[RMDB]
RNA sequence: GGGAACGACUCGAGUAGAGUCGAAAACAUGUUAAAGGUGGAGGACGACAUGAAGAAUGUGGUGUGUGACUCUGUUGUCGUGAUGAAAGAUCGAGUGUUUGAGGACAAGGACUUCGAUCCUGAGUGGUGUUAACGGAUCAUUCGUGAUCCGUUAACAAAAAGAAACAACAACAACAAC
Reactivity to DMS in 0.01 (KOAc 150mM, MgCl2 10mM, bicine 150mM(pH8.5), 24C), signal-to-noise 4, nucleotides 027 to 126: c060a050u010g000u010u000a060a090a100g020g020u000g010g000a100g020g010a100c100g000a050c040a050u000g010a080a060g010a050a060u010g040u000g000g020u000g020u000g010u010g010a080c060u000c030u000g010u000u000g010u000c050g020u010g010a100u010g000a100a110a090g000a030u000c020g010a030g010u010g010u000u000u000g000a150g010g010a110c140a090a140g000g000a030c020u010u000c060g000a050u000c000c030u010g000a150g020u000g000g000
Reactivity to 2A3 in 0.01 (KOAc 150mM, MgCl2 10mM, bicine 150mM(pH8.5), 24C), signal-to-noise 2, nucleotides 027 to 126: c020a010u060g020u200u140a160a060a050g040g060u040g020g050a060g060g000a030c000g010a010c030a030u130g070a040a070g030a090a060u110g000u030g060g020u080g060u000g010u000g030a010c010u000c020u050g050u040u040g060u000c070g000u050g070a100u070g080a110a070a020g020a010u010c030g010a050g000u090g220u050u080u080g140a110g000g090a040c030a040a050g010g000a010c000u030u000c070g000a050u000c010c010u050g050a080g020u080g010g090